[RMDB]
RNA sequence: GGGAACGACUCGAGUAGAGUCGAAAACGCAUCUUCGGAUGCGCAUGAUCCUAAGUCUCGCUCGAUGGUCUAAGACAGCAACAUGGAGUCGGAAACGACGAUGAAAUGUUGUCGAGACCAUCUAGCGAGAUAUGGACACAAGGCGCUUCGGCGCCAACCAUAGGCUAUGAUUCGUCAUAGCCUAUGGAAAAGAAACAACAACAACAAC
Reactivity to 2A3 in 0.01 (KOAc 150mM, MgCl2 10mM, bicine 150mM(pH8.5), 24C), signal-to-noise 9, nucleotides 027 to 156: c010g000c000a000u000c010u080u070c280g160g000a000u000g000c000g000c020a070u200g050a210u030c000c000u020a120a030g010u000c000u000c000g000c000u020c020g010a000u000g000g010u000c010u040a170a090g030a030c020a010g060c000a020a280c010a170u080g220g100a180g050u000c010g020g030a090a140a090c050g050a010c020g060a030u040g010a060a110a080u020g010u010u000g010u020c000g000a000g000a000c000c000a000u000c000u000a000g000c000g000a000g000a000u000a000u010g000g000a010c010a000c030a250a100g010g000c010g000c010u060u160c270g140g000c000g000c010c000a000a010
Reactivity to DMS in 0.01 (KOAc 150mM, MgCl2 10mM, bicine 150mM(pH8.5), 24C), signal-to-noise 3, nucleotides 027 to 156: c010g010c010a010u010c000u000u000c300g050g010a020u010g030c000g010c010a070u010g010a200u000c000c000u020a070a240g020u000c000u000c000g020c000u000c070g020a010u000g020g010u000c010u000a190a190g010a100c180a050g000c010a040a110c040a010u000g010g000a300g010u030c010g000g000a100a070a240c060g030a100c010g000a020u000g010a280a160a020u010g000u000u000g000u010c010g000a090g000a030c000c000a010u000c020u000a020g020c010g000a020g020a000u000a040u000g020g000a080c040a130c090a080a130g000g010c020g050c000u000u010c270g010g000c010g050c000c000a000a060